[RMDB]
Source information:
This 207-nucleotide RNA was probed chemically with DMS and 2A3. For DMS the reverse transcriptase was MarathonRT. For 2A3, 1,483 sequencing reads were counted. Source: RMDB library OK3TST, as collected in RNAgym.

RNA sequence: GGGAACGACUCGAGUAGAGUCGAAAAGAUGGAGGGUCUGGCCUCGGACUCCUCCUAUAAGAUGUAACUAUUACGAGGCCAUUAAUGGCGUUUUCGCCUAGGUGCACGCCGGCGUGCGUGUCACCGUAAGACUUAAUGAAUAACACGCCGGAUACAACAGUCAGUGAUAUUUCGAUAUCACUGACUGAAAAGAAACAACAACAACAAC
Reactivity to DMS in 0.01 (KOAc 150mM, MgCl2 10mM, bicine 150mM(pH8.5), 24C), signal-to-noise 1, nucleotides 027 to 156: g010a170u000g020g000a020g000g020g050u010c020u020g010g000c020c030u010c000g030g000a040c040u000c010c000u000c020c000u010a040u000a070a160g020a160u000g010u010a070a140c140u000a070u000u000a100c000g030a060g010g010c010c020a230u000u000a060a030u010g010g010c010g000u020u000u010u000c050g030c000c000u000a120g010g030u000g000c000a070c000g000c030c020g040g000c030g070u010g000c020g010u000g000u010c010a040c010c100g020u000a050a080g010a140c100u000u020a100a140u000g010a140a090u010a130a070c000a030c000g020c020c000g000g010a130u000a090c030a010a160
Reactivity to 2A3 in 0.01 (KOAc 150mM, MgCl2 10mM, bicine 150mM(pH8.5), 24C), signal-to-noise 3, nucleotides 027 to 156: g060a040u100g000g000a000g020g010g000u020c020u040g020g000c010c000u000c000g000g030a000c010u070c020c000u000c020c010u040a060u010a010a060g080a020u160g100u180a040a090c100u080a040u260u130a060c040g000a010g010g000c000c000a010u030u100a020a100u140g020g000c030g070u040u030u270u300c040g010c000c000u000a080g000g000u000g000c000a010c000g000c000c010g010g000c000g000u030g000c000g000u000g050u100c030a000c000c000g000u040a030a000g030a020c070u060u150a070a020u130g060a090a030u130a120a020c020a000c020g010c000c030g000g010a140u180a030c060a070a020